[RMDB]
RNA sequence: GGGAACGACUCGAGUAGAGUCGAAAACAUCCUUUUAAUAAGUUUGGCAAAGCUCGUGUCUAUUAUGAGAGCAUGUCUUACCAGGAGCAAGAUGAACUUUUUGCCAUGACAAAGCGUAACGUCAUUCAUAGGUAUCUCUUCGGAGAUACCAAAAGAAACAACAACAACAAC
Reactivity to 2A3 in 0.01 (KOAc 150mM, MgCl2 10mM, bicine 150mM(pH8.5), 24C), signal-to-noise 9, nucleotides 027 to 129: c030a070u100c020c000u150u130u070u080a190a200u180a120a010g030u030u030u050g000g000c000a010a060a020g010c030u000c030g080u100g080u060c070u020a160u230u070a080u230g100a060g000a000g050c020a000u030g010u000c000u010u020a040c050c030a040g070g030a070g000c030a040a020g030a040u090g030a060a120c030u030u030u060u060u120g040c030c040a040u050g010a030c030a040a070a020g060c050g080u060a050a030c070g020u020c040a030u100u070c030a030u090a090
Reactivity to DMS in 0.01 (KOAc 150mM, MgCl2 10mM, bicine 150mM(pH8.5), 24C), signal-to-noise 5, nucleotides 027 to 129: c170a040u020c020c050u000u000u000u000a110a090u060a060a100g000u000u000u000g000g000c000a070a060a140g000c050u000c070g040u060g010u040c070u050a070u000u060a100u060g030a120g010a050g000c050a120u040g040u030c030u010u040a070c090c070a070g000g010a100g000c060a010a000g000a010u030g030a110a070c070u010u020u010u000u010g000c050c110a060u000g030a000c040a110a050a050g000c090g010u000a060a040c110g030u020c070a030u040u010c050a080u000a090